Annotation
Chemical mapping of a 207-nucleotide RNA with DMS and 2A3. For DMS, 4,579 sequencing reads were counted. Conditions: 150 mM KOAc, 10 mM MgCl2 and 150 mM bicine (pH 8.5), 24 C. It was measured as part of the RMDB library M2RFPK. For 2A3, 1,290 sequencing reads were counted. In probing experiments dimethyl sulfate is read out at A N1 and C N3, which are open when not base-paired. For DMS the reverse transcriptase was MarathonRT. Reactivities are given for positions 27 through 156.
RNA sequence: GGGAACGACUCGAGUAGAGUCGAAAAAAGCCUCUGUUCGAAAUCAUCGGGAGUGAUCCAGAUGACGGUCCUGCCAUGAGACCGCAACGAGAGCAUGUCGCAUCGAAUGGACUCGGGGAGUCGGCCGUGUAGUGGGGAUGGUUCGCCAUCCCCACAAGAAUGACUAGAAGUUCGCUUCUAGUCAUUCAAAAGAAACAACAACAACAAC
Reactivity to DMS in 0.01 (KOAc 150mM, MgCl2 10mM, bicine 150mM(pH8.5), 24C), signal-to-noise 2, nucleotides 027 to 156: a050a070g010c050c010u010c030u000g000u000u000c020g020a120a130a070u000c000a000u000c000g010g020g000a070g030u010g000a300u000c020c000a060g010a020u010g010a050c020g010g000u000c030c010u000g020c100c210a110u010g000a070g000a040c010c020g000c070a080a100c080g020a220g020a160g020c080a090u010g020u020c080g000c020a120u000c060g000a070a270u000g000g000a030c030u000c010g010g040g060g000a090g030u010c010g020g010c020c030g020u000g030u000a080g020u000g000g010g040g020a080u000g010g030u000u010c100g000c020c000a000u000c000c010c020c000a000c010a000a180
Reactivity to 2A3 in 0.01 (KOAc 150mM, MgCl2 10mM, bicine 150mM(pH8.5), 24C), signal-to-noise 2, nucleotides 027 to 156: a000a000g090c020c010u070c090u060g080u060u060c040g020a100a070a090u050c020a020u020c050g000g010g000a050g020u180g030a050u020c010c010a030g030a050u050g030a050c000g010g000u000c000c000u030g160c030c010a090u120g020a010g000a110c010c000g050c060a070a090c070g050a010g010a010g070c020a030u150g090u140c030g020c070a080u020c040g040a050a040u120g060g000a020c020u000c050g050g000g010g000a010g030u040c050g020g140c040c020g040u070g040u070a170g000u000g000g000g030g000a000u010g000g030u030u040c090g020c030c010a000u000c000c000c000c000a010c000a000a000